Overview
Chemical mapping of a 177-nucleotide RNA with 2A3 and DMS. It was measured as part of the RMDB library M2PK90. Values are in units of 0.01, from 0 to 300, in steps of 10. For 2A3, 2,332 sequencing reads were counted. Conditions: 150 mM KOAc, 10 mM MgCl2 and 150 mM bicine (pH 8.5), 24 C.
RNA sequence: GGGAACGACUCGAGUAGAGUCGAAAAAAAAAUAAGCGAAGAUAGCUCAGUCGGUAGAGCAGCAGGACCCAAACCUGCGAGUAAAGGGAUCAAGACCCUGUUCGCGCAAAAACCGAAGUUAAAAAAACAUUACAUUAAAGUUCGCUUUAAUGUAAUGAAAAGAAACAACAACAACAAC
Reactivity to 2A3 in 0.01 (KOAc 150mM, MgCl2 10mM, bicine 150mM(pH8.5), 24C), signal-to-noise 2, nucleotides 027 to 126: a000a000a000a000a010u200a040a020g040c050g030a050a000g070a170u180a090g010c000u000c010a030g010u020c020g000g010u010a000g000a020g020c010a000g000c010a010g000g070a100c020c020c030a020a040a060c010c000u030g020c020g000a000g010u030a030a080a020g040g000g000a000u170c100a060a050g110a170c000c000c020u020g060u050u040c010g000c000g000c020a070a040a040a000a000c010c000g020a030a010g140u120u130a100a130a000a000a010a010a010
Reactivity to DMS in 0.01 (KOAc 150mM, MgCl2 10mM, bicine 150mM(pH8.5), 24C), signal-to-noise 4, nucleotides 027 to 126: a020a050a080a080a020u000a070a090g010c010g010a020a050g010a300u000a040g000c010u000c010a060g010u000c030g010g000u000a080g010a020g000c010a100g020c020a000g000g020a050c050c010c020a040a040a160c010c020u000g010c000g010a050g010u010a030a100a040g000g000g000a050u000c170a100a170g010a140c010c000c000u000g000u000u010c050g000c020g010c140a040a040a040a070a030c040c020g010a010a100g010u020u000a000a000a030a070a050a050a110